[RMDB]
RNA sequence: GGGAACGACUCGAGUAGAGUCGAAAAUAGUUAUCGAGAAUCUGAUGGCGCGUCGAGUAUCGGGCCAUCCUGCUUCGAAGCUUGAAAUAGCUAGAAUGAUAAUGGCCAAACAACAAGUGGUACAACACCCUGUGGUUAGGUUCGCCUAACCACAGGGAAAAGAAACAACAACAACAAC
Reactivity to 2A3 in 0.01 (KOAc 150mM, MgCl2 10mM, bicine 150mM(pH8.5), 24C), signal-to-noise 3, nucleotides 027 to 126: u160a000g020u010u030a080u080c040g010a010g040a110a000u050c050u070g000a010u030g030g030c050g010c020g200u130c110g110a070g090u100a090u130c040g000g070g000c000c000a020u000c000c010u030g020c050u000u020c000g030a050a000g000c000u000u040g060a070a120a060u100a010g000c050u050a030g120a100a090u110g070a030u050a050a000u060g010g020c000c020a080a120a040c060a060a040c030a030a180g040u060g120g000u080a110c030a060a000c020a090
Reactivity to DMS in 0.01 (KOAc 150mM, MgCl2 10mM, bicine 150mM(pH8.5), 24C), signal-to-noise 2, nucleotides 027 to 126: u010a130g050u000u000a030u010c000g020a090g000a110a000u030c040u020g020a070u000g030g000c040g000c050g000u010c050g000a250g000u050a100u050c010g000g000g000c000c010a020u020c010c180u000g000c040u010u010c020g050a080a080g000c000u030u010g000a140a080a080u000a060g000c020u000a110g000a070a080u010g000a030u010a000a010u000g000g010c020c020a070a060a090c200a100a040c240a110a050g010u000g000g030u000a080c110a080a090c240a080
This 177-nucleotide RNA was probed chemically with 2A3 and DMS. Reactivities are given for positions 27 through 126. For DMS the reverse transcriptase was MarathonRT.